The data come from the RNA Mapping Database (RMDB), library OK3TST. Chemical mapping of a 207-nucleotide RNA with 2A3 and DMS. 2A3 adducts were read by reverse transcription with SuperScript II with manganese. The RNA was probed in 150 mM KOAc, 10 mM MgCl2 and 150 mM bicine (pH 8.5) at 24 C.
[RMDB]
RNA sequence: GGGAACGACUCGAGUAGAGUCGAAAACACGGUCAACUAACGAUAAUCGAUGCACAUUCUCAGCUGCGUCUGUCUGUUGAGUGAGACGGCGAUGACCGGAUGACUCAUCCGCUGAUUCCUUGUUCAGAUUACCGCUUGAUUCGGCAUUUGGGUCAUGGAAAAUGCUCAGUUUCGACUGAGCAUUUUCAAAAGAAACAACAACAACAAC
Reactivity to 2A3 in 0.01 (KOAc 150mM, MgCl2 10mM, bicine 150mM(pH8.5), 24C), signal-to-noise 6, nucleotides 027 to 156: c060a010c010g020g040u030c040a060a040c140u170a120a050c090g060a140u140a150a120u220c090g030a050u100g020c030a030c010a110u220u030c050u020c060a030g000c060u050g010c020g120u080c100u110g070u030c020u020g070u070u080g040a070g050u080g020a040g040a040c040g000g030c070g070a080u070g020a030c010c000g000g030a020u040g000a010c000u000c020a010u010c020c080g000c000u010g010a010u020u040c030c000u040u060g070u100u120c050a040g040a260u120u200a140c030c100g000c010u020u030g010a010u030u020c000g000g000c030a030u000u000u010g030g000g000u010c020a030u050g020
Reactivity to DMS in 0.01 (KOAc 150mM, MgCl2 10mM, bicine 150mM(pH8.5), 24C), signal-to-noise 2, nucleotides 027 to 156: c030a100c030g000g010u010c020a050a190c080u000a100a060c040g020a060u000a050a070u020c050g010a120u000g020c060a100c040a130u000u000c100u000c070a100g000c050u000g020c030g050u000c130u010g040u000c020u010g030u000u000g010a120g010u000g000a170g000a110c040g000g010c030g040a090u000g000a040c000c000g000g000a060u000g010a040c040u020c010a070u000c090c020g040c020u000g000a060u000u010c030c040u000u000g000u010u010c010a210g000a180u010u000a070c040c050g020c040u000u010g010a100u000u000c030g090g020c040a070u020u000u000g000g010g020u000c020a060u020g000